[RMDB]
RNA sequence: GGGAACGACUCGAGUAGAGUCGAAAAACAUGCUACGGCAUGAGGCCGAUGAUGCUAACAAUGCUCCUAUGGUCUUUGACUAAGAGCUGAGGAUUCUCUAAGAAUGUUUCCCAAGAGCUGAGGCCAACAAGUUAGGAUCAUUCGUGAUCCUAACUUGAAAAGAAACAACAACAACAAC
Reactivity to 2A3 in 0.01 (KOAc 150mM, MgCl2 10mM, bicine 150mM(pH8.5), 24C), signal-to-noise 9, nucleotides 027 to 126: a000c010a000u010g000c010u040a050c190g100g000c010a010u020g030a090g020g010c000c000g060a080u110g020a010u080g020c010u040a040a050c060a100a110u180g000c000u000c010c010u130a020u020g000g000u010c000u080u120u300g010a000c000u000a070a100g000a000g000c010u020g030a130g040g010a020u070u000c040u000c030u080a110a080g040a130a100u160g030u010u020u010c010c000c010a030a030g090a000g040c010u020g010a020g000g000c010c000a000a020
Reactivity to DMS in 0.01 (KOAc 150mM, MgCl2 10mM, bicine 150mM(pH8.5), 24C), signal-to-noise 9, nucleotides 027 to 126: a120c010a010u000g010c000u000a110c160g020g000c010a020u000g000a100g010g010c000c000g000a120u020g000a090u020g010c080u000a110a200c150a070a100u010g000c000u000c000c010u020a050u010g010g000u000c010u030u010u030g000a020c010u000a060a110g000a040g000c000u000g000a260g000g000a100u010u010c010u010c100u020a090a090g010a100a060u020g000u010u000u000c000c000c040a110a090g000a040g000c020u000g000a110g010g010c000c010a110a180
The data come from the RNA Mapping Database (RMDB), libraries RFM100 and RFMREP. The record gives the reactivity of an RNA of 177 nucleotides to 2A3 and DMS. DMS adducts were read by reverse transcription with MarathonRT. The RNA was probed in 150 mM KOAc, 10 mM MgCl2 and 150 mM bicine (pH 8.5) at 24 C. DMS (dimethyl sulfate) methylates the pairing face of unpaired adenines and cytosines.